[RMDB]
RNA sequence: GGGAACGACUCGAGUAGAGUCGAAAAGCUGACAUUCUGGACCAUGGGGUAGAAGCUACCCUGUCUGCCUCCCACACCCACUCUCAAGGAUCCAAGACUAUGAAGGGAGAAGAGAGAGCCCACCGAGCAUUGAAGGUCUUUUCGAAGACCUUCAAUGAAAAGAAACAACAACAACAAC
Reactivity to DMS in 0.01 (KOAc 150mM, MgCl2 10mM, bicine 150mM(pH8.5), 24C), signal-to-noise 4, nucleotides 027 to 126: g030c040u000g010a090c090a100u010u010c060u000g000g010a080c050c130a070u000g000g010g000g000u000a030g010a220a120g000c040u000a060c020c010c010u010g000u000c050u010g030c050c030u000c030c010c010a070c130a100c050c010c030a110c070u000c030u010c040a060a140g020g000a110u010c030c020a080a080g010a170c160u020a080u000g010a110a130g000g000g010a040g010a090a060g010a200g020a110g000a140g030c020c010c020a080c090c060g010a110g020
Reactivity to 2A3 in 0.01 (KOAc 150mM, MgCl2 10mM, bicine 150mM(pH8.5), 24C), signal-to-noise 1, nucleotides 027 to 126: g020c020u020g000a030c010a090u100u100c050u130g030g060a060c040c000a160u130g020g020g000g020u070a030g080a220a050g080c020u000a020c000c000c010u020g050u000c000u020g000c000c020u020c010c030c000a030c030a010c010c020c000a080c020u010c000u010c010a070a040g090g020a030u000c020c000a070a010g050a070c080u100a080u300g080a130a070g100g010g000a040g020a070a020g020a000g000a010g000a010g000c000c020c000a030c000c050g010a020g030
Structure probing data (DMS and 2A3) for a 177-nucleotide construct. For DMS, 2,367 sequencing reads were counted. 2A3 is a SHAPE reagent: it acylates the 2'-hydroxyl of flexible nucleotides of all four kinds.